Structure probing data (DMS and 2A3) for a 207-nucleotide construct. The 2A3 profile rests on 1,426 reads. For DMS the reverse transcriptase was MarathonRT. 2A3 adducts were read by reverse transcription with SuperScript II with manganese. The data come from the RNA Mapping Database (RMDB), library M2RFPK.
[RMDB]
RNA sequence: GGGAACGACUCGAGUAGAGUCGAAAAUUGACUUUUUACAGUUCCUACUUAUCCGGUUUUAACGCUGUUUUAUUGGCGCAAAGGUUUACGGAUAAACAACUAAUAAUUAAACCUUUUGUGUGCGAAAAUUGGACGUUUAGGUUCGCCUAAACGUCAAACUGACUCUAAGUUUCGACUUAGAGUCAGUAAAAGAAACAACAACAACAAC
Reactivity to DMS in 0.01 (KOAc 150mM, MgCl2 10mM, bicine 150mM(pH8.5), 24C), signal-to-noise 1, nucleotides 027 to 156: u000u000g000a100c070u000u010u020u000u000a100c090a230g000u000u000c000c000u000a060c090u000u000a020u000c010c010g000g000u010u000u020u000a280a090c010g020c000u010g000u010u030u010u000a080u040u000g020g000c020g030c020a010a020a030g010g010u000u010u020a150c010g000g000a040u000a040a040a140c040a050a130c110u010a090a090u000a100a180u000u000a020a020a020c000c010u000u010u020u000g010u000g000u020g030c000g000a070a050a080a180u000u000g020g030a030c010g020u000u000u000a000g010g010u000u020c300g040c000c020u000a000a000a010c000g010u000c000a010a020
Reactivity to 2A3 in 0.01 (KOAc 150mM, MgCl2 10mM, bicine 150mM(pH8.5), 24C), signal-to-noise 3, nucleotides 027 to 156: u050u060g070a060c090u080u070u070u100u170a070c030a040g010u010u000c000c000u000a040c020u040u070a020u000c000c000g060g000u030u010u020u080a070a030c020g000c010u020g180u240u080u140u130a140u230u230g020g000c020g000c020a020a010a010g030g000u000u010u000a000c000g000g020a000u030a020a120a020c020a040a030c030u180a090a140u130a140a010u180u110a060a010a020c000c000u010u010u110u190g050u020g010u010g030c070g060a040a090a100a080u090u130g060g000a000c000g010u000u000u000a010g010g010u020u060c200g130c000c000u010a000a000a000c000g000u000c000a000a000